An RNA of 177 nucleotides, treated with DMS and read out base by base.
The DMS profile rests on 615 reads.
DMS adducts were read by reverse transcription with MarathonRT.
The reactions ran in a buffer of 150 mM KOAc, 10 mM MgCl2 and 150 mM bicine (pH 8.5), at 24 C.
The data come from the RNA Mapping Database (RMDB), library TTRDEL.

RNA sequence: GGGAACGACUCGAGUAGAGUCGAAAAGAUAUGGACUACCCACCACUAGAACUACACGAUUACACUCGGAAACGAGUGGGUCGUGCUAGUGAGGUCCUAAGUCAAAAGGCACACUUCGGUGUGCCAACGUCCAUUCUGUGUUCGCACAGAAUGGACGAAAAGAAACAACAACAACAAC
Reactivity to DMS in 0.01 (KOAc 150mM, MgCl2 10mM, bicine 150mM(pH8.5), 24C), signal-to-noise 1, nucleotides 027 to 126: g000a030u030a230u020g000g000a050c000u000a210c080c000c010a300c070c000a030c000u000a000g000a080a070c170u020a300c000a000c000g000a030u000u000a130c000a010c000u000c000g010g000a060a120a110c000g000a000g040u000g000g000g020u030c000g010u000g000c010u000a020g010u020g000a140g040g000u000c000c000u020a110a050g000u000c160a090a100a070a130g060g000c000a000c000a000c000u000u010c130g010g000u010g000u000g000c000c000a000a030